An RNA of 207 nucleotides, treated with 2A3 and DMS and read out base by base. For 2A3, 6,397 sequencing reads were counted. DMS adducts were read by reverse transcription with MarathonRT. Conditions: 150 mM KOAc, 10 mM MgCl2 and 150 mM bicine (pH 8.5), 24 C.
RNA sequence: GGGAACGACUCGAGUAGAGUCGAAAACAGAACUGGCAGGAGCAUAAAGGAGGAAAAUGGGAGAGCUUGGAGUUCUGCAAAACAUGAGAAAAAUGUGUUUCGAAGGGGCAGUCAACUGCUUUGAAUGCUUCCAAGAGACCAUAAGAUAAGGCAGUGACUAAUGGAUGAUCUUCGGAUCAUCCAUUAGAAAAGAAACAACAACAACAAC
Reactivity to 2A3 in 0.01 (KOAc 150mM, MgCl2 10mM, bicine 150mM(pH8.5), 24C), signal-to-noise 7, nucleotides 027 to 156: c030a010g070a060a030c040u040g040g000c020a020g020g020a020g020c020a050u100a120a080a040g020g020a030g010g050a030a040a050a080u120g000g030g000a050g010a010g020c020u020u040g020g000a040g010u070u030c020u030g030c020a010a030a070a050c040a070u170g030a060g100a090a090a020a040a020u070g140u020g010u040u030u010c010g010a090a080g000g000g000g000c010a000g020u010c000a010a050c120u140g040c000u130u020u010g010a030a010u020g010c000u170u100c020c000a040a010g010a000g010a020c000c000a010u040a060a050g040a060u100a070a020g070g010c010a010g050u070g030a010
Reactivity to DMS in 0.01 (KOAc 150mM, MgCl2 10mM, bicine 150mM(pH8.5), 24C), signal-to-noise 3, nucleotides 027 to 156: c030a110g000a050a080c040u020g030g050c020a120g030g010a150g010c060a070u000a060a100a110g000g030a100g000g000a010a030a120a070u020g030g000g000a120g010a070g000c040u000u010g020g010a120g010u000u000c020u020g000c060a050a070a030a080c080a080u000g010a140g000a040a070a070a090a090u010g010u020g010u000u000u000c000g010a180a110g000g010g020g020c000a000g010u000c010a020a050c110u010g000c100u000u000u000g000a060a040u000g000c020u000u000c000c020a010a300g000a070g000a030c030c020a060u000a060a110g000a080u000a040a090g020g000c010a000g010u000g010a160